[RMDB]
RNA sequence: GGGAACGACUCGAGUAGAGUCGAAAAUUUAGAUCCAUCACCAAAGUAGUUAUCAAUUGACAUAAAGUCGAAAACACCAAAAAUAAGAGUUGCAUUUGUCAUUGUAAUGAAUGCGUCAUUACUUUGGAGUUUGCUACCAUUUCGAUGGUAGCAAACUAAAAGAAACAACAACAACAAC
Reactivity to 2A3 in 0.01 (KOAc 150mM, MgCl2 10mM, bicine 150mM(pH8.5), 24C), signal-to-noise 3, nucleotides 027 to 126: u120u100u060a100g010a030u040c000c000a140u100c040a000c020c020a010a020a000g010u010a000g010u000u060a100u160c060a050a040u160u140g030a030c020a040u230a140a050a000g040u030c000g030a150a000a060a000c070a020c010c080a130a130a030a020a020u200a090a040g070a010g060u080u090g080c070a020u050u000u000g100u040c160a170u050u120g150u230a080a030u010g030a010a040u050g060c000g030u030c030a000u020u020a000c000u000u000u000g000g000
Reactivity to DMS in 0.01 (KOAc 150mM, MgCl2 10mM, bicine 150mM(pH8.5), 24C), signal-to-noise 2, nucleotides 027 to 126: u020u070u020a040g020a160u030c020c000a110u040c100a180c010c020a020a020a010g000u030a020g000u040u130a020u040c140a070a130u000u020g000a000c000a100u000a070a160a210g000u000c000g010a000a070a000a020c070a110c140c190a000a130a020a070a100u020a060a050g000a220g000u000u000g040c000a000u000u000u000g020u000c080a110u040u010g010u030a030a000u010g010a040a000u000g000c090g070u010c030a000u070u000a000c030u000u040u010g020g000

Notes
An RNA of 177 nucleotides, treated with 2A3 and DMS and read out base by base. For 2A3, 1,459 sequencing reads were counted. For DMS, 1,504 sequencing reads were counted. Values cover nucleotides 27 to 126. It was measured as part of the RMDB library OK1LIB. The reactions ran in a buffer of 150 mM KOAc, 10 mM MgCl2 and 150 mM bicine (pH 8.5), at 24 C. DMS adducts were read by reverse transcription with MarathonRT.